[RMDB]
RNA sequence: GGGAACGACUCGAGUAGAGUCGAAAACAACACGUCCUCGUCGUACAGACUGGUAACAUGUGUCACCACAUAUCCAAGCUUGGGUACACGGGCUUGACCCAACCCCUUGGGCGGAUGGUGGCACAUGAAAAGAAGUAACACUUCGGUGUUACUUCAAUCGGCAAAGACUCUUCGGAGUCUUUGCCGAAAAAGAAACAACAACAACAAC
Reactivity to 2A3 in 0.01 (KOAc 150mM, MgCl2 10mM, bicine 150mM(pH8.5), 24C), signal-to-noise 1, nucleotides 027 to 156: c080a020a020c050a010c110g160u110c000c060u020c040g000u000c010g030u070a120c010a040g000a060c000u010g090g100u090a090a060c000a000u000g000u000g000u000c000a000c000c000a040c050a120u160a040u080c000c000a000a000g000c120u060u050g000g000g030u140a040c040a010c070g000g030g050c020u230u300g160a300c000c000c000a060a030c000c000c000c030u000u010g030g000g000c000g000g000a040u000g000g000u000g000g000c030a000c000a000u000g000a000a010a000a060g000a000a000g010u000a000a000c000a000c040u060u220c300g080g030u020g000u000u000a000c000u000u000c000a000a000